[RMDB]
RNA sequence: GGGAACGACUCGAGUAGAGUCGAAAAAGCAUUUGCCAAAGAUGUUUUCAUUAAUCAAGAACGAAAGUUAGAGGUUCGAAGGCGAUCAGAUACCGCCCUAGUUUUAACCAUAAAAGAUGCCAGCUAGCUCCAGGUAACCUUUCGAGGUUACCUGGAGAAAAGAAACAACAACAACAAC
Reactivity to 2A3 in 0.01 (KOAc 150mM, MgCl2 10mM, bicine 150mM(pH8.5), 24C), signal-to-noise 2, nucleotides 027 to 126: a050g000c000a020u000u090u270g070c070c000a000a060a000g020a000u040g000u030u000u000u240c030a040u080u280a080a140u100c010a020a010g050a090a000c020g000a030a010a010g050u120u090a020g080a060g140g030u090u090c000g000a000a000g050g050c010g000a010u010c080a000g180a070u130a010c060c010g040c010c000c000u020a120g020u000u050u030u070a150a160c030c000a210u090a110a120a000a000g100a000u100g150c060c030a010g020c030u040a000g030
Reactivity to DMS in 0.01 (KOAc 150mM, MgCl2 10mM, bicine 150mM(pH8.5), 24C), signal-to-noise 1, nucleotides 027 to 126: a020g000c020a060u000u020u000g060c020c150a070a110a020g000a020u000g000u030u000u000u000c030a160u030u030a080a060u000c140a050a110g000a050a010c030g010a040a050a080g000u000u000a060g000a190g040g000u000u040c070g000a050a110g010g030c000g050a070u000c110a060g000a160u000a110c210c000g010c000c040c010u000a140g040u010u000u000u040a000a250c110c000a060u020a040a080a050a040g000a060u010g000c150c080a060g000c030u000a100g000